RNA sequence: GGGAACGACUCGAGUAGAGUCGAAAAGAGAAGUAAACUGUUAGCCGCCAGAGUCUUGACCCGCUGUGGCCGCGGCGGCCUAGUUGAGACUGAAACGGCGGGUAAGAGCUCGGAGAGACCGAGCAGACGUGAUUACUCAGUUCGCUGAGUAAUCACGAAAAGAAACAACAACAACAAC
Reactivity to DMS in 0.01 (KOAc 150mM, MgCl2 10mM, bicine 150mM(pH8.5), 24C), signal-to-noise 3, nucleotides 027 to 126: g020a060g010a070a120g030u000a080a130a050c080u010g040u000u010a090g000c000c000g010c000c020a080g000a010g020u000c000u000u010g000a000c010c010c060g020c000u000g010u010g020g000c060c050g000c300g000g010c000g000g000c300c030u030a000g000u030u000g000a040g000a070c030u000g020a070a150a060c130g000g040c000g050g000g000u020a020a050g000a090g000c020u000c000g000g000a270g000a190g040a180c000c000g000a010g050c000a050g010a190
Reactivity to 2A3 in 0.01 (KOAc 150mM, MgCl2 10mM, bicine 150mM(pH8.5), 24C), signal-to-noise 2, nucleotides 027 to 126: g100a010g050a170a030g040u260a040a090a110c090u120g050u150u080a040g040c000c000g000c010c000a040g020a010g090u000c000u010u020g020a010c000c000c010g000c020u020g010u070g090g030c030c030g020c010g000g000c010g000g000c000c010u010a010g000u000u050g020a010g010a040c040u040g060a060a100a050c040g010g000c020g000g000g010u010a040a000g030a010g010c000u000c000g020g000a120g000a020g020a100c000c000g000a000g000c000a000g020a010
Conditions: 150 mM KOAc, 10 mM MgCl2 and 150 mM bicine (pH 8.5), 24 C. Chemical mapping of a 177-nucleotide RNA with DMS and 2A3. It was measured as part of the RMDB library OK1LIB. For 2A3, 3,747 sequencing reads were counted.